[RMDB]
RNA sequence: GGGAACGACUCGAGUAGAGUCGAAAAUUGAAAAGUUCUCUGAUGAGCUGAGGGUAGGAGUGAAAGGCUAAUCAAACCCCGUGAUAGCUGGUUCUCUUCGAAAUGCAUUUAGGUGCAGCGUCACGUGCAAUGCCCGUAGAUUCGUCUACGGGCAUUGAAAAGAAACAACAACAACAAC
Reactivity to 2A3 in 0.01 (KOAc 150mM, MgCl2 10mM, bicine 150mM(pH8.5), 24C), signal-to-noise 3, nucleotides 027 to 126: u130u130g100a040a000a020a020g030u120u020c020u000c000u020g090a110u030g050a030g000c040u000g030a070g050g010g000u030a020g010g050a050g000u090g030a060a040a040g030g010c010u050a030a030u040c030a100a040a230c000c040c010c000g010u010g030a010u020a050g010c000u010g080g040u100u010c090u000c000u050u040c050g070a120a140a090u160g010c060a060u010u100u220a090g070g000u060g000c010a000g000c010g030u000c020a000c020g020u040g000
Reactivity to DMS in 0.01 (KOAc 150mM, MgCl2 10mM, bicine 150mM(pH8.5), 24C), signal-to-noise 5, nucleotides 027 to 126: u030u050g000a070a090a070a070g000u000u010c020u010c020u010g000a100u020g000a060g020c040u000g000a110g010g000g020u000a050g000g010a060g020u000g000a060a120a200g020g010c010u010a040a090u000c060a060a050a170c040c010c010c020g030u000g010a020u010a070g030c000u000g000g000u010u000c020u000c050u010u020c100g010a070a050a110u020g000c080a040u000u020u020a100g000g000u010g000c000a060g010c050g020u010c020a020c080g020u030g000